RNA sequence: GGGAACGACUCGAGUAGAGUCGAAAACAGGCGUACCGUACACACGGGAGCAGCUCCUACCGCUGCUUCCUCCCGGACCUGACGGGGUUCGGAGCGCUCACGUCAUACAGGGCCUGACAGGUAGGCGCCCCUAGUCGAAGUUCGCUUCGACUAGGGGAAAAGAAACAACAACAACAAC
Reactivity to DMS in 0.01 (KOAc 150mM, MgCl2 10mM, bicine 150mM(pH8.5), 24C), signal-to-noise 2, nucleotides 027 to 126: c050a030g000g010c090g060u000a030c260c040g010u000a070c160a120c240a050c180g010g040g060a010g020c000a030g000c000u000c010c010u000a000c020c030g000c000u000g010c000u000u000c050c010u000c100c000c000g000g000a040c090c020u010g010a130c300g020g010g010g000u000u000c020g000g000a230g020c040g020c030u000c050a040c050g000u000c060a050u000a080c110a070g000g070g000c020c070u000g030a030c170a110g020g000u010a020g020g000c300g000
Reactivity to 2A3 in 0.01 (KOAc 150mM, MgCl2 10mM, bicine 150mM(pH8.5), 24C), signal-to-noise 1, nucleotides 027 to 126: c040a000g050g000c010g080u060a110c030c000g060u050a050c140a020c030a020c140g020g000g000a010g000c000a000g000c020u060c080c000u010a020c010c010g010c000u000g010c000u050u000c010c000u050c000c000c000g000g040a050c000c020u090g090a130c080g110g020g010g020u030u060c010g040g040a030g000c020g010c030u040c050a110c040g020u050c040a010u070a210c090a100g030g110g010c000c010u030g050a070c030a000g000g030u000a010g070g000c040g060
The data come from the RNA Mapping Database (RMDB), library OK2TST. An RNA of 177 nucleotides, treated with DMS and 2A3 and read out base by base. Conditions: 150 mM KOAc, 10 mM MgCl2 and 150 mM bicine (pH 8.5), 24 C.